[RMDB]
An RNA of 170 nucleotides, treated with DMS and 2A3 and read out base by base.
RNA sequence: GGGAACGACUCGAGUAGAGUCGAAAAGAGAAGAAAGAGAGCGAAUGUGUCCGGAGGGAACCCCCAAGCUUUCAACAGAGGAAGAGAGCAAGAUAGAGGAGCCCCCGUGACGCUGGCAGCAUCGCGGAUACCGAAACCUUCGGGUUUCGGAAAAGAAACAACAACAACAAC
Reactivity to DMS in 0.01 (KOAc 150mM, MgCl2 10mM, bicine 150mM(pH8.5), 24C), signal-to-noise 2, nucleotides 027 to 129: g020a140g020a010a020g040a020a040a080g000a070g030a040g020c040g040a050a100u010g010u030g000u010c030c040g020g020a060g030g020g050a060a020c000c000c050c040c030a130a090g010c030u000u020u200c020a060a170c110a070g080a070g070g040a070a200g030a030g000a050g040c090a090a120g030a080u060a090g020a050g060g000a050g000c130c000c020c050c000g030u030g050a010c110g010c030u040g020g020c180a000g020c030a000u020c010g040c020g010g000a070u000a090
Reactivity to 2A3 in 0.01 (KOAc 150mM, MgCl2 10mM, bicine 150mM(pH8.5), 24C), signal-to-noise 3, nucleotides 027 to 129: g000a000g020a010a010g020a000a000a000g080a000g020a000g050c010g000a110a050u140g060u000g020u070c000c000g010g020a070g020g010g020a070a070c030c010c000c000c000a030a020g020c030u000u120u090c040a090a060c060a050g110a050g070g030a080a010g020a030g000a000g040c020a030a030g030a060u140a030g010a030g010g030a020g000c030c020c000c000c000g050u060g030a010c030g010c000u020g050g010c030a000g000c010a020u030c000g010c050g010g000a010u020a070
Conditions: 150 mM KOAc, 10 mM MgCl2 and 150 mM bicine (pH 8.5), 24 C. Source: RMDB library 15KLIB, as collected in RNAgym.